[RMDB]
RNA sequence: GGGAACGACUCGAGUAGAGUCGAAAAGUCAACUCGUUAACGAUCCUUGGAAACCUAUAAGUGCCGAGAACACUCGCACUGACUUCGCUCUCGCUGCCUGAUCAGUGAUCGAAGGGUCAGCCCGGAUGUAGCCUUCCGUCCGGAUCCUGGCCUCGUUUGUAUUAAAGAGGUUCGCCUCUUUAAUACAAAAAGAAACAACAACAACAAC
Reactivity to DMS in 0.01 (KOAc 150mM, MgCl2 10mM, bicine 150mM(pH8.5), 24C), signal-to-noise 2, nucleotides 027 to 156: g000u000c040a050a090c030u010c060g000u000u000a060a100c060g010a090u000c020c030u000u000g010g000a130a120a120c030c020u000a110u000a050a030g000u000g020c010c030g030a170g000a040a050c040a050c030u000c020g010c020a020c030u000g030a020c030u010u000c020g030c030u000c050u000c090g050c040u000g020c020c040u000g000a040u000c040a060g020u000g010a080u000c030g030a060a040g020g010g010u000c000a030g000c090c000c010g040g000a040u000g000u000a130g010c090c060u000u000c100c020g010u000c020c000g040g020a040u000c040c040u000g020g010c010c000u000c060g000u000u000
Reactivity to 2A3 in 0.01 (KOAc 150mM, MgCl2 10mM, bicine 150mM(pH8.5), 24C), signal-to-noise 4, nucleotides 027 to 156: g050u050c030a030a110c040u010c040g050u080u120a100a020c030g020a050u060c010c000u030u040g070g050a090a110a070c050c040u120a110u050a300a000g000u020g110c170c090g010a020g050a120a070c190a080c100u020c020g000c000a020c020u020g020a020c010u020u020c020g010c010u020c000u000c010g000c010u020g050c010c030u060g030a150u140c000a010g000u000g050a060u250c030g000a060a050g000g000g000u000c000a000g010c000c000c000g010g000a010u020g050u090a070g050c010c050u060u060c030c010g010u000c000c000g000g010a030u090c020c000u000g010g000c010c000u020c020g020u010u000
Structure probing data (DMS and 2A3) for a 207-nucleotide construct.
The data come from the RNA Mapping Database (RMDB), library ARCHII.
The reactions ran in a buffer of 150 mM KOAc, 10 mM MgCl2 and 150 mM bicine (pH 8.5), at 24 C.
For 2A3, 2,102 sequencing reads were counted.